Source: RMDB library OK2TRN, as collected in RNAgym. This 177-nucleotide RNA was probed chemically with 2A3 and DMS. For 2A3, 1,669 sequencing reads were counted.
RNA sequence: GGGAACGACUCGAGUAGAGUCGAAAAUCAAACGGCCAAACCGUGCCUGGUCAACGCUUCAGGGAUUUUAAACAUUGCGACGACUGAAUAAAGGUCAAUUUGAUAUUUGGUUACGCCGUGACGAACCCUUAGGGAUUCGGUUCGCCGAAUCCCUAAGAAAAGAAACAACAACAACAAC
Reactivity to 2A3 in 0.01 (KOAc 150mM, MgCl2 10mM, bicine 150mM(pH8.5), 24C), signal-to-noise 2, nucleotides 027 to 126: u090c030a030a130a000c010g000g000c020c000a100a040a000c020c000g040u040g020c000c000u020g030g020u030c040a100a100c040g010c060u180u090c090a070g000g120g020a080u110u070u060u300a030a060a020c020a060u000u120g030c030g010a030c030g020a020c090u040g060a100a060u280a240a120a000g040g000u080c040a080a090u070u070u170g140a110u040a140u160u190u100g000g020u010u010a010c020g000c010c010g020u020g000a010c060g000a020a040c010c010
Reactivity to DMS in 0.01 (KOAc 150mM, MgCl2 10mM, bicine 150mM(pH8.5), 24C), signal-to-noise 3, nucleotides 027 to 126: u010c040a060a200a040c050g040g050c030c070a140a090a070c010c020g020u000g000c030c010u010g000g000u000c060a080a300c100g040c040u000u000c080a120g030g020g000a120u010u000u010u020a010a160a130c040a050u000u010g020c070g020a010c220g020a020c030u010g000a070a070u000a070a090a020g000g020u000c130a100a150u010u000u000g000a140u020a070u000u020u000g010g030u000u000a120c260g020c020c010g030u000g000a090c110g020a060a150c000c030